Conditions: 150 mM KOAc, 10 mM MgCl2 and 150 mM bicine (pH 8.5), 24 C.
Structure probing data (DMS and 2A3) for a 177-nucleotide construct.
2A3 is a SHAPE reagent: it acylates the 2'-hydroxyl of flexible nucleotides of all four kinds.
DMS adducts were read by reverse transcription with MarathonRT.

RNA sequence: GGGAACGACUCGAGUAGAGUCGAAAACGCGUCAUAAAUUGCGCCGAGGGCCUGAUGGUACUGCUGAGUUAACUACUACUGCUGCCACACGCUUUAUGAAAGAUCUCCAUUUUACGGGAACCAAUGGGCAUUGAGCGAAUUUCGAUUCGCUCAAUGCAAAAGAAACAACAACAACAAC
Reactivity to DMS in 0.01 (KOAc 150mM, MgCl2 10mM, bicine 150mM(pH8.5), 24C), signal-to-noise 1, nucleotides 027 to 126: c110g000c060g040u000c080a080u000a000a030a180u050u010g030c060g000c020c040g030a070g000g000g000c030c000u010g010a080u000g000g040u000a040c080u000g000c090u020g010a070g000u000u000a110a050c160u010a070c120u000a090c050u020g020c050u000g040c010c060a070c020a110c080g050c040u000u040u000a070u000g000a020a080a060g000a100u010c000u000c010c040a150u000u010u010u010a050c090g020g000g020a070a180c100c070a080a060u000g020g010
Reactivity to 2A3 in 0.01 (KOAc 150mM, MgCl2 10mM, bicine 150mM(pH8.5), 24C), signal-to-noise 1, nucleotides 027 to 126: c020g040c000g020u090c060a010u100a180a230a030u130u180g000c050g030c050c020g010a150g000g070g000c010c020u090g020a100u010g000g060u030a040c090u030g050c020u010g010a010g100u060u010a030a070c030u060a040c020u050a170c050u140g010c030u030g020c020c000a020c000a000c020g030c000u030u070u090a090u150g090a100a070a000g120a030u000c030u000c040c010a090u070u110u080u080a040c070g000g000g010a010a010c060c010a060a100u090g010g000